[RMDB]
RNA sequence: GGGAACGACUCGAGUAGAGUCGAAAAGGCCGCGUGAACGACGUUAUGUGGAAGCGGUUCGUGGAGUCCGGUGCGGUCAAGGUGAAGGCCGUCCCCAUCGUCGCUGGGGGAUUUAGUGAUGAAGCCACACGUAAUAAAUAUUCGUAUUUAUUACGUGAAAAGAAACAACAACAACAAC
Reactivity to DMS in 0.01 (KOAc 150mM, MgCl2 10mM, bicine 150mM(pH8.5), 24C), signal-to-noise 9, nucleotides 027 to 126: g010g010c010c010g010c040g020u000g010a100a080c050g010a060c050g010u010u010a070u010g020u000g010g010a130a130g010c030g010g010u000u000c070g020u000g010g010a130g010u010c030c030g010g020u000g020c040g010g010u000c030a060a100g010g010u000g010a130a110g000g010c020c060g000u000c020c000c000c030a090u010c050g010u000c040g020c180u000g000g000g000g000g000a070u000u000u010a070g010u000g000a080u000g010a130a130g010c060c070a220
Reactivity to 2A3 in 0.01 (KOAc 150mM, MgCl2 10mM, bicine 150mM(pH8.5), 24C), signal-to-noise 9, nucleotides 027 to 126: g030g010c010c000g020c040g050u080g090a130a020c020g090a010c040g070u150u150a120u280g090u090g070g020a060a030g020c020g020g010u050u070c020g030u050g050g040a040g030u030c040c030g010g030u090g010c020g000g020u030c040a050a060g080g020u100g050a050a040g040g000c000c000g020u050c000c010c000c000a050u080c020g080u020c020g000c060u030g000g010g010g040g010a020u110u100u100a070g010u040g040a070u040g040a030a020g040c010c020a030

About this RNA: Structure probing data (DMS and 2A3) for a 177-nucleotide construct. Source: RMDB library OK2TST, as collected in RNAgym. The RNA was probed in 150 mM KOAc, 10 mM MgCl2 and 150 mM bicine (pH 8.5) at 24 C. The 2A3 profile rests on 46,708 reads.